Chemical mapping of a 207-nucleotide RNA with 2A3 and DMS. Reactivities are given for positions 27 through 156. The DMS profile rests on 5,636 reads. Source: RMDB library OK3TST, as collected in RNAgym. The reactions ran in a buffer of 150 mM KOAc, 10 mM MgCl2 and 150 mM bicine (pH 8.5), at 24 C.
RNA sequence: GGGAACGACUCGAGUAGAGUCGAAAAAGCCAUUGGCCGUUGACCUCAAAAGGGUUGGUGUUCGAUAUGCUGAAGAUGGUGGCGCCACUAUGGAUGGUGUUAUUCAUGUUCGUCGAGGUGUCGAAGAUGUAUCUCUCGGUAAUUCAAAAUACGCACAUGAGGGAAGAGAAUUCGUUCUCUUCCCUCAAAAAGAAACAACAACAACAAC
Reactivity to 2A3 in 0.01 (KOAc 150mM, MgCl2 10mM, bicine 150mM(pH8.5), 24C), signal-to-noise 1, nucleotides 027 to 156: a010g040c000c000a070u020u040g090g000c030c000g050u010u020g020a060c000c030u030c040a000a000a000a000g070g000g000u020u010g020g000u000g090u070u030c000g000a050u000a020u040g090c060u120g010a030a000g030a060u040g050g070u010g010g010c000g010c000c070a000c020u070a010u130g060g050a040u070g030g000u020g020u200u080a010u060u090c020a010u020g000u020u020c000g030u000c040g010a090g000g000u020g000u020c030g000a060a010g000a030u110g020u130a040u020c020u000c000u010c020g020g010u020a010a020u070u060c040a000a000a120a060u300a030c250g000c220a010c010a110
Reactivity to DMS in 0.01 (KOAc 150mM, MgCl2 10mM, bicine 150mM(pH8.5), 24C), signal-to-noise 2, nucleotides 027 to 156: a070g010c010c030a190u010u010g020g020c020c020g030u000u000g010a110c020c010u000c040a100a110a170a140g000g020g020u000u000g010g010u000g000u010u000c020g030a130u010a060u000g030c030u000g030a060a070g020a080u000g010g040u010g000g000c030g040c020c010a050c060u020a110u000g000g030a110u000g020g030u000g000u010u010a060u010u000c040a060u000g050u000u010c020g020u000c060g040a120g020g020u000g010u000c030g000a050a090g000a130u010g020u000a060u010c040u010c020u010c030g020g010u010a020a110u000u010c090a090a050a060a100u000a080c040g000c040a050c060a170

The 2A3 profile rests on 594 reads.